RNA sequence: GGGAACGACUCGAGUAGAGUCGAAAACUAUGGUGAGUCCCUAUCUAGUAUAGCAAUCCACCAAGCAGGUGAGUUCACACAAUUCAGGUUCUCACAGAAAAUGCGCCCUGACUUGACAGGUAUGGUCCACUGACGUCAUAUUCGUAUGACGUCAGUGAAAAGAAACAACAACAACAAC
Reactivity to DMS in 0.01 (KOAc 150mM, MgCl2 10mM, bicine 150mM(pH8.5), 24C), signal-to-noise 4, nucleotides 027 to 126: c050u000a050u020g000g030u000g010a100g020u020c230c300c020u000a000u000c040u030a100g020u030a060u010a020g000c100a100a120u030c080c010a030c030c020a040a080g000c140a070g010g000u000g000a050g000u000u010c020a070c080a080c130a090a100u030u020c190a100g000g000u000u010c000u000c030a030c010a130g000a050a060a070a080u020g010c070g000c140c000c010u000g020a120c090u010u000g000a040c070a100g020g030u020a070u040g020g010u000c050
Reactivity to 2A3 in 0.01 (KOAc 150mM, MgCl2 10mM, bicine 150mM(pH8.5), 24C), signal-to-noise 6, nucleotides 027 to 126: c040u050a110u100g020g010u040g030a080g050u070c020c020c000u000a020u010c080u080a040g110u110a050u030a040g010c040a020a080u030c000c000a010c010c000a050a030g020c060a020g080g080u030g010a030g020u030u040c050a050c010a030c040a260a110u190u120c080a050g010g050u030u010c010u000c000a010c000a010g130a040a110a020a020u100g010c010g050c010c000c000u020g040a060c030u050u050g030a020c010a030g060g030u160a100u120g080g000u000c020